Structure probing data (DMS and 2A3) for a 177-nucleotide construct. It was measured as part of the RMDB libraries RFM100 and RFMREP. For DMS the reverse transcriptase was MarathonRT. For 2A3 the reverse transcriptase was SuperScript II with manganese.
[RMDB]
RNA sequence: GGGAACGACUCGAGUAGAGUCGAAAAGGAGAAGGGUUCCAUAACAAUGGAAUUCAUUUAUGGGUGAGUCGAUCCUAAGGUCUGGGUUAACUCUCUCUAAUAAGCUUACUAGGUGCAUGGAUCGAAAGGGACUUACUUAUUUCGAUAAGUAAGUCCCAAAAGAAACAACAACAACAAC
Reactivity to DMS in 0.01 (KOAc 150mM, MgCl2 10mM, bicine 150mM(pH8.5), 24C), signal-to-noise 3, nucleotides 027 to 126: g030g010a090g010a110a120g010g000g010u000u030c010c000a010u010a180a070c300a120a040u000g000g000a040a020u000u010c000a040u030u010u000a070u000g000g000g000u030g000a060g010u000c010g010a020u000c000c010u010a080a070g020g010u010c150u010g000g000g010u000u010a100a070c050u000c020u000c030u000c030u000a070a070u000a060a160g000c040u010u000a040c030u000a050g000g020u000g020c020a070u000g010g000a120u000c050g020a060a130a110
Reactivity to 2A3 in 0.01 (KOAc 150mM, MgCl2 10mM, bicine 150mM(pH8.5), 24C), signal-to-noise 4, nucleotides 027 to 126: g100g010a050g060a050a100g000g010g000u000u020c010c000a000u050a100a070c160a090a040u020g010g020a020a020u000u040c010a010u040u120u150a100u190g010g030g020u080g000a020g030u000c030g050a030u020c000c000u050a100a030g190g040u060c050u050g000g010g010u030u060a050a020c000u010c000u010c010u000c000u010a060a180u090a180a060g010c020u080u100a060c000u110a070g100g000u050g060c080a080u040g030g040a040u050c030g050a060a060a060